[RMDB]
RNA sequence: GGGAACGACUCGAGUAGAGUCGAAAAGUAAAAGAGGAGAAAGCGCGCACUCCUCUAGCGCGCAGAUGUACGUACCACAUCAGGUACGAACGCGCCAAGGGUGGGAGGCGCGAACCCACCCAAAAAACAUAUCUCGUCGAUUCGUCGACGAGAUAUGAAAAGAAACAACAACAACAAC
Reactivity to 2A3 in 0.01 (KOAc 150mM, MgCl2 10mM, bicine 150mM(pH8.5), 24C), signal-to-noise 1, nucleotides 027 to 126: g070u110a080a180a050a000g030a020g020g010a000g040a020a170a020g100c060g000c000g020c010a030c020u030c010c000u000c010u040a060g050c050g000c000g000c040a020g030a110u230g040u070a050c020g020u000a020c030c020a030c020a290u210c130a070g010g010u000a000c010g010a010a000c010g010c000g000c010c050a090a100g000g020g000u040g000g000g000a040g010g060c020g000c000g010a010a010c000c000c000a020c010c000c000a040a040a000a000a000a010
Reactivity to DMS in 0.01 (KOAc 150mM, MgCl2 10mM, bicine 150mM(pH8.5), 24C), signal-to-noise 2, nucleotides 027 to 126: g000u000a080a100a170a040g010a040g000g000a050g010a010a110a170g010c020g000c000g060c040a300c000u000c000c000u000c000u000a000g010c030g000c000g010c050a040g010a170u000g030u000a090c000g000u000a000c000c000a180c240a130u020c240a040g010g000u000a000c000g000a060a100c040g000c060g050c030c180a110a090g010g000g020u000g010g010g050a090g030g000c050g000c020g010a040a070c020c010c000a020c000c000c000a000a010a050a060a030a000
This 177-nucleotide RNA was probed chemically with 2A3 and DMS. The reactions ran in a buffer of 150 mM KOAc, 10 mM MgCl2 and 150 mM bicine (pH 8.5), at 24 C. Values cover nucleotides 27 to 126. In probing experiments dimethyl sulfate is read out at A N1 and C N3, which are open when not base-paired.